[RMDB]
RNA sequence: GGGAACGACUCGAGUAGAGUCGAAAAGUUUGCGGCUUCGGCCGCAAACAAAUAAAAAGGAUAAAAUACCAGUACCCCGAAACACAAGCGAGUCCUCCUGGCAAACCAACAUGUUCGCAUGUUGGAACCAUUAAAUUCAGUUCGCUGAAUUUAAUGGAAAAGAAACAACAACAACAAC
Reactivity to 2A3 in 0.01 (KOAc 150mM, MgCl2 10mM, bicine 150mM(pH8.5), 24C), signal-to-noise 1, nucleotides 027 to 126: g000u040u000u000g000c010g000g000c070u080u130c200g160g040c060c000g000c010a000a010a000c020a000a020a000u020a020a010a000a000a000g010g010a050u200a170a300a120a030u210a160c030c020a020g120u200a100c000c030c000c000g080a090a150a000c060a030c070a190a000g080c000g030a010g020u000c000c000u010c020c000u020g020g050c060a090a000a020c000c000a020a000c000a000u000g050u090u110c230g030c150a020u010g030u000u010g000g000a020a010
Reactivity to DMS in 0.01 (KOAc 150mM, MgCl2 10mM, bicine 150mM(pH8.5), 24C), signal-to-noise 2, nucleotides 027 to 126: g010u000u000u000g000c000g010g040c000u010u040c260g030g030c000c000g000c020a000a000a000c010a010a080a090u000a050a090a110a100a100g010g000a130u010a030a070a120a140u010a050c040c000a080g000u000a100c030c010c010c010g020a090a040a060c080a040c110a090a090g010c030g010a030g000u000c020c020u000c010c030u000g050g030c110a060a070a170c010c000a000a000c000a020u000g000u000u020c150g010c010a000u000g010u000u000g020g010a040a040

This 177-nucleotide RNA was probed chemically with 2A3 and DMS. For DMS the reverse transcriptase was MarathonRT. The 2A3 profile rests on 1,039 reads. Conditions: 150 mM KOAc, 10 mM MgCl2 and 150 mM bicine (pH 8.5), 24 C. The data come from the RNA Mapping Database (RMDB), library M2PK50.